[RMDB]
RNA sequence: GGGAACGACUCGAGUAGAGUCGAAAAGAUUUGCACAGCAGCUUAAAGUCAGCUCUGGAGGUUGACUUGGACACAGAGGGUGGGCGAAAUGCCGUUCUCGAUCUGCUUCUAGAUCUCGGGGUCACCAUCAAUGGAUCGUGUUCGCACGAUCCAUUGAAAAAGAAACAACAACAACAAC
Reactivity to DMS in 0.01 (KOAc 150mM, MgCl2 10mM, bicine 150mM(pH8.5), 24C), signal-to-noise 3, nucleotides 027 to 126: g000a100u030u000u000g020c090a110c170a040g010c030a050g000c210u000u020a040a030a040g000u000c010a030g010c010u000c060u010g000g010a150g000g010u000u000g000a020c020u010u000g000g000a100c190a070c170a100g000a030g010g010g020u000g030g050g020c020g010a030a070a160u020g010c020c000g000u000u000c020u010c030g000a070u000c010u000g000c060u010u020c070u000a060g000a050u000c000u000c050g020g000g010g010u000c020a070c060c050a110
Reactivity to 2A3 in 0.01 (KOAc 150mM, MgCl2 10mM, bicine 150mM(pH8.5), 24C), signal-to-noise 2, nucleotides 027 to 126: g000a040u080u070u130g080c090a060c040a090g050c000a010g030c010u060u170a110a010a020g000u000c000a010g000c030u010c060u260g220g090a150g030g030u010u030g000a000c000u000u000g020g020a060c060a000c040a160g040a030g070g000g030u240g110g000g010c040g040a200a150a130u230g000c000c020g020u020u000c020u000c000g010a060u020c010u000g040c000u070u040c000u010a050g000a060u000c030u010c040g020g040g000g050u030c020a030c060c000a050
Chemical mapping of a 177-nucleotide RNA with DMS and 2A3. For DMS, 2,654 sequencing reads were counted. For DMS the reverse transcriptase was MarathonRT. Reactivities are given for positions 27 through 126. The 2A3 profile rests on 1,503 reads.